[RMDB]
RNA sequence: GGGAACGACUCGAGUAGAGUCGAAAAUAUCUCUUUAGUCCCCACCAGUCUGCAGCUGCUUCUCACUCUUCCCCUGUCUCACAUGACCUCAACACUUUUGAAGAAUACUUGUCAGUUAUUUUGCAGAAUGUCUCUCAGAUGGGCUUGUCUGAUAUUAAGGUAAAUCACUAUUCGUAGUGAUUUACCUAAAAGAAACAACAACAACAAC
Reactivity to 2A3 in 0.01 (KOAc 150mM, MgCl2 10mM, bicine 150mM(pH8.5), 24C), signal-to-noise 1, nucleotides 027 to 156: u050a000u040c050u000c000u070u100u020a110g030u120c020c000c000c000a010c010c010a000g110u100c080u090g030c060a010g020c020u100g050c000u100u000c000u060c000a050c090u050c050u120u100c010c000c000c010u000g040u000c040u030c010a040c020a110u000g070a000c000c000u080c090a220a000c000a070c090u110u210u120u270g050a040a050g000a080a020u110a030c050u080u080g020u060c040a030g050u000u030a020u070u120u180u050g000c000a020g020a060a030u060g020u000c000u030c000u010c110a000g050a060u120g000g060g110c000u000u130g050u050c010u020g110a010u120a040u300u180a050
Reactivity to DMS in 0.01 (KOAc 150mM, MgCl2 10mM, bicine 150mM(pH8.5), 24C), signal-to-noise 2, nucleotides 027 to 156: u010a120u000c020u020c030u010u000u000a220g000u000c020c000c020c040a150c090c020a070g010u000c030u000g040c010a110g030c040u000g010c020u000u030c030u010c030a120c070u000c030u020u000c020c010c030c070u010g020u000c030u020c030a050c050a090u010g010a070c030c010u010c010a080a070c020a070c050u000u010u010u000g000a100a090g000a060a080u000a040c040u000u000g020u000c050a120g010u000u000a050u000u000u020u000g010c010a070g000a060a050u010g010u000c030u000c020u010c030a080g010a080u000g030g020g020c070u000u000g020u000c010u010g020a090u010a070u010u010a110
Source: RMDB library OK3TST, as collected in RNAgym. Chemical mapping of a 207-nucleotide RNA with 2A3 and DMS. For DMS the reverse transcriptase was MarathonRT.